[RMDB]
RNA sequence: GGGAACGACUCGAGUAGAGUCGAAAAAUGCACACGCACACACAUCAGCAACGGAUUCUGAAACGGCAAGGAGAGUCGUUUUCUUUCCACCGGUGAAACGCUCUGUGCGCACUGCACCAAACACAGGGGAUCACGGUACGUUCGCGUACCGUGAUCCAAAAGAAACAACAACAACAAC
Reactivity to 2A3 in 0.01 (KOAc 150mM, MgCl2 10mM, bicine 150mM(pH8.5), 24C), signal-to-noise 1, nucleotides 027 to 126: a000u100g000c000a010c030a020c150g050c000a000c000a000c000a000c000a030u040c010a010g070c000a000a110c080g050g030a100u100u030c000u100g000a030a030a000c000g010g000c000a020a170g090g030a130g070a040g070u020c000g060u000u020u080u110c010u030u010u000c080c090a130c020c060g000g020u000g040a060a050a010c030g000c000u000c020u020g050u030g000c000g020c010a050c040u040g020c000a020c010c120a030a030a030c050a000c080a010g100g010
Chemical mapping of a 177-nucleotide RNA with 2A3. Values cover nucleotides 27 to 126.